[RMDB]
RNA sequence: GGGAACGACUCGAGUAGAGUCGAAAAGCGCGUGAGGGCGGUGACGAUUCUUUCUUGUAAAACAAAAUGAGGUCGUUGGGGGAGUGUCCAGGCUCACCGUCGUUUUGUUUAAGAACGGUUUGUGCGCCGAGGCAAUAAGAUUCGUCUUAUUGCCUCGAAAAGAAACAACAACAACAAC
Reactivity to 2A3 in 0.01 (KOAc 150mM, MgCl2 10mM, bicine 150mM(pH8.5), 24C), signal-to-noise 2, nucleotides 027 to 126: g000c020g010c000g040u050g090a050g010g090g000c030g000g040u040g020a010c010g020a030u140u060c020u060u060u000c020u000u070g090u110a050a020a110a070c030a020a060a050a070u080g010a060g010g030u030c030g030u050u040g030g000g000g000g000a020g030u040g030u000c010c030a030g030g000c010u000c000a010c000c000g060u050c020g000u010u000u040u070g050u000u200u120a040a010g020a020a010c000g000g030u020u070u070g020u040g000c010g000c030
Reactivity to DMS in 0.01 (KOAc 150mM, MgCl2 10mM, bicine 150mM(pH8.5), 24C), signal-to-noise 5, nucleotides 027 to 126: g020c040g010c040g010u000g010a090g020g000g010c050g020g010u000g010a100c030g010a050u000u000c030u000u000u010c070u000u000g010u000a090a080a080a200c070a040a020a050a060u010g010a090g020g000u000c050g020u000u000g000g000g010g000g000a060g010u010g010u010c050c100a090g000g010c030u000c030a030c010c190g010u000c010g010u000u000u000u000g000u010u000u020a100a050g010a040a030c030g000g010u000u000u010g010u000g010c120g020c050